This 177-nucleotide RNA was probed chemically with DMS and 2A3. Conditions: 150 mM KOAc, 10 mM MgCl2 and 150 mM bicine (pH 8.5), 24 C.

RNA sequence: GGGAACGACUCGAGUAGAGUCGAAAAGAUAUGGAAUCGCCGAGUGCAGAACUACCGAAAUCGGAAACGAUUCGGCUGCACGUUUGACGCGAUUCCUAAGUCAAACUUCGGGGUUCGCCCCGAAGAACUACCAUAUUACGUUCGCGUAAUAUGGUAGAAAAGAAACAACAACAACAAC
Reactivity to DMS in 0.01 (KOAc 150mM, MgCl2 10mM, bicine 150mM(pH8.5), 24C), signal-to-noise 9, nucleotides 027 to 126: g000a030u000a300u010g010g000a010a010u000c000g030c000c010g000a080g010u000g000c000a010g000a060a030c050u020a300c040c000g000a020a020a050u000c000g000g000a100a060a150c000g010a010u000u000c000g000g010c000u000g010c000a010c000g010u000u010u010g010a170c300g000c000g000a010u000u000c000c000u000a010a080g000u000c030a110a080a220c000u000u000c000g000g000g000g020u000u010c260g010c000c000c000c000g000a000a000g000a080a210
Reactivity to 2A3 in 0.01 (KOAc 150mM, MgCl2 10mM, bicine 150mM(pH8.5), 24C), signal-to-noise 7, nucleotides 027 to 126: g010a000u080a030u160g000g000a010a000u000c010g000c020c020g040a040g010u000g000c010a000g020a130a100c160u200a070c300c020g050a120a070a080u020c010g020g030a090a050a040c020g010a000u010u000c000g000g000c000u000g000c000a010c010g010u080u090u200g040a040c030g000c000g000a000u000u000c000c000u000a060a010g040u010c030a040a070a140c010u000u000c000g020g020g010g000u050u080c280g190c000c000c000c000g000a000a000g000a000a000
Source: RMDB library TTRDEL, as collected in RNAgym.